[RMDB]
RNA sequence: GGGAACGACUCGAGUAGAGUCGAAAAAUAAAUAAAGCGCACCAAUAUGGAGGUGCGCAACCAGCGUGACCUAGGAACACGCAUCCACGCGUCUACUAAGACGCCAAAGGUAUUCCAAAUAAAAAAAUCAUAAGUCUAACUUCGGUUAGACUUAUGAAAAAGAAACAACAACAACAAC
Reactivity to 2A3 in 0.01 (KOAc 150mM, MgCl2 10mM, bicine 150mM(pH8.5), 24C), signal-to-noise 1, nucleotides 027 to 126: a000u020a010a000a050u150a070a140a100g000c010g000c000a010c020c000a020a110u300a290u300g160g000a090g010g000u000g000c010g000c000a000a000c020c000a030g000c000g000u000g020a020c030c080u150a120g000g080a080a020c000a030c000g000c010a030u000c040c010a040c070g000c020g000u000c000u040a140c000u100a230a040g020a000c000g000c000c000a000a000a020g000g000u000a070u040u080c020c040a090a030a030u300a070a080a000a000a000a010a030
Reactivity to DMS in 0.01 (KOAc 150mM, MgCl2 10mM, bicine 150mM(pH8.5), 24C), signal-to-noise 1, nucleotides 027 to 126: a040u050a050a040a120u000a020a230a190g000c000g020c040a000c000c020a050a160u020a090u000g010g050a260g000g000u000g050c000g010c000a000a020c120c020a080g000c000g000u000g000a020c080c120u000a140g000g020a150a060c060a030c000g000c020a170u000c040c080a150c100g000c000g000u000c000u000a130c260u000a150a050g010a000c000g050c000c060a000a000a090g000g000u000a050u000u000c030c000a050a030a110u060a050a020a050a010a140a130a110